The record gives the reactivity of an RNA of 177 nucleotides to DMS. For DMS the reverse transcriptase was MarathonRT. The reactions ran in a buffer of 150 mM KOAc, 10 mM MgCl2 and 150 mM bicine (pH 8.5), at 24 C. The DMS profile rests on 1,288 reads.
RNA sequence: GGGAACGACUCGAGUAGAGUCGAAAAGAUAUGGAUUACGCCGAAGACUUACACAGCAAACCCUGUGGUGCCAUCGGAAACGAUGGGCACUGAAAAUGUGUACUGGUCUUCGGCGUAAUCCUAAGUCCACUGGAGAAGGGUUCGCCCUUCUCCAGUGAAAAGAAACAACAACAACAAC
Reactivity to DMS in 0.01 (KOAc 150mM, MgCl2 10mM, bicine 150mM(pH8.5), 24C), signal-to-noise 2, nucleotides 027 to 126: g010a110u000a290u000g000g000a030u000u000a000c000g000c000c000g010a020a010g000a030c000u010u000a010c020a010c010a070g060c280a210a120a150c140c070c030u000g020u000g010g010u000g010c010c000a030u000c010g010g020a130a090a150c010g020a000u020g000g010g020c000a030c010u010g000a090a060a120a100u010g020u000g010u000a010c300u030g010g000u000c000u000u000c010g000g000c000g020u000a000a000u000c000c000u000a020a070g000u010c040